An RNA of 177 nucleotides, treated with 2A3 and DMS and read out base by base.
[RMDB]
RNA sequence: GGGAACGACUCGAGUAGAGUCGAAAAAGCGACAGCGCAAAGGGGGCGAGGGGUGGUCCUGCGGGCGCGAGGAAGGACACCCGAAGAAAGGAAGGGUGAAAACCCUGUUUCGGCGGGAAUUACUCCUGACUUACUUAUAGUUCGCUAUAAGUAAGUCAAAAGAAACAACAACAACAAC
Reactivity to 2A3 in 0.01 (KOAc 150mM, MgCl2 10mM, bicine 150mM(pH8.5), 24C), signal-to-noise 2, nucleotides 027 to 126: a000g050c030g020a080c090a080g070c060g010c060a040a090a070g010g020g000g000g000c040g010a030g050g010g010g010u040g010g030u040c010c030u020g010c030g030g000g000c040g000c030g020a030g020g010a010a040g010g000a020c010a060c000c020c010g020a040a030g060a010a020a000g110g170a030a040g010g000g020u010g000a010a030a000a010c010c010c010u010g030u010u050u010c030g000g000c000g020g000g060a010a020u130u070a050c010u010c000c020u010
Reactivity to DMS in 0.01 (KOAc 150mM, MgCl2 10mM, bicine 150mM(pH8.5), 24C), signal-to-noise 3, nucleotides 027 to 126: a040g000c030g030a110c170a090g000c060g010c040a060a100a150g000g000g000g000g000c050g010a080g020g000g000g020u000g010g020u000c040c030u000g000c120g000g000g000c050g000c040g010a090g000g000a100a040g000g000a130c170a110c010c010c010g010a050a030g000a020a030a060g010g020a130a020g010g000g000u000g000a060a050a090a040c000c000c000u000g010u010u000u000c030g010g010c030g000g000g000a070a050u010u000a060c060u000c000c040u010
For 2A3, 2,915 sequencing reads were counted.
The reactions ran in a buffer of 150 mM KOAc, 10 mM MgCl2 and 150 mM bicine (pH 8.5), at 24 C.
2A3 adducts were read by reverse transcription with SuperScript II with manganese.